Background:
Conditions: 150 mM KOAc, 10 mM MgCl2 and 150 mM bicine (pH 8.5), 24 C. The record gives the reactivity of an RNA of 177 nucleotides to DMS and 2A3. The DMS profile rests on 1,936 reads. Values cover nucleotides 27 to 126. It was measured as part of the RMDB library TTRINS. For 2A3, 3,076 sequencing reads were counted.
RNA sequence: GGGAACGACUCGAGUAGAGUCGAAAAGAUAUGGACAUGAACUACGGUGUAAUACGUGCCGAAGAACGUGUUAUGCUCGGAAACGAGCAUAACACGGGAGGCACGUUUAAGCCGCAUGUCCUAAGUCCAAUCUUCAGUGGUUCGCCACUGAAGAUUGAAAAGAAACAACAACAACAAC
Reactivity to DMS in 0.01 (KOAc 150mM, MgCl2 10mM, bicine 150mM(pH8.5), 24C), signal-to-noise 2, nucleotides 027 to 126: g010a090u000a260u000g010g000a030c010a000u000g010a130a140c170u000a300c010g000g020u000g020u020a090a230u000a050c030g040u000g030c000c020g000a140a200g010a120a160c020g000u000g010u000u010a010u000g020c000u000c000g010g010a060a100a110c000g020a020g010c010a010u000a010a010c000a000c000g000g000g000a110g030g000c000a000c010g010u000u000u000a030a300g000c010c020g010c010a000u000g000u000c000c000u000a010a060g010u020c010
Reactivity to 2A3 in 0.01 (KOAc 150mM, MgCl2 10mM, bicine 150mM(pH8.5), 24C), signal-to-noise 1, nucleotides 027 to 126: g050a050u110a090u210g000g000a010c000a040u010g000a210a130c100u160a070c300g020g020u100g000u140a100a060u040a060c000g010u000g000c000c000g140a270a130g040a090a020c020g000u000g000u020u010a020u010g000c000u020c030g000g030a060a060a010c050g010a000g000c020a000u000a000a030c000a020c020g000g000g000a040g000g040c000a010c030g000u000u000u000a010a010g010c020c000g060c000a000u010g010u050c000c020u000a060a010g010u030c020